[RMDB]
About this RNA:
This 207-nucleotide RNA was probed chemically with 2A3 and DMS. For 2A3, 2,867 sequencing reads were counted. The reactions ran in a buffer of 150 mM KOAc, 10 mM MgCl2 and 150 mM bicine (pH 8.5), at 24 C.
RNA sequence: GGGAACGACUCGAGUAGAGUCGAAAACGGUAUCGGAGUGGGUUUUGGAUUAUAAUCAUCAUCGUCUAUGACAUCAUCAUCUUCGACUUCGAUAUUUAUUUUGCUAUCUUGAUGAUGUCCUGUAUCAGUUGCAUUUUCAGCACUCGACUGAAUAUUAGUGUUACAUCAUGUUCGCAUGAUGUAACACAAAAGAAACAACAACAACAAC
Reactivity to 2A3 in 0.01 (KOAc 150mM, MgCl2 10mM, bicine 150mM(pH8.5), 24C), signal-to-noise 5, nucleotides 027 to 156: c020g010g000u020a010u020c010g000g000a020g010u060g010g080g010u060u060u110u130g090g010a060u070u090a080u120a260a070u100c090a030u020c030a020u080c080g140u030c140u100a110u130g010a000c000a020u000c000a000u000c000a020u020c030u200u120c060g050a030c010u050u030c030g000a020u010a030u040u120u020a160u030u100u070u080g080c020u060a150u180c070u030u050g000a010u010g000a000u020g020u000c020c020u110g030u040a080u060c040a060g000u020u030g040c030a090u080u010u000u120c000a010g000c050a080c070u070c040g180a180c050u040g040a020a020u080a050u080u160a030
Reactivity to DMS in 0.01 (KOAc 150mM, MgCl2 10mM, bicine 150mM(pH8.5), 24C), signal-to-noise 2, nucleotides 027 to 156: c050g020g020u000a010u010c070g040g030a080g030u010g030g020g030u000u000u000u020g010g000a120u010u000a100u000a080a110u000c070a100u000c060a080u000c040g000u020c050u000a090u010g020a020c020a060u000c030a010u000c040a020u000c040u010u000c040g020a040c050u000u010c090g010a090u000a080u010u000u000a120u020u000u000u000g000c060u000a060u000c060u000u010g000a040u000g020a070u000g000u000c000c090u000g000u000a080u000c070a090g060u010u000g020c010a130u000u020u010u000c000a080g000c030a270c120u000c100g030a070c000u000g000a040a050u000a150u000u000a150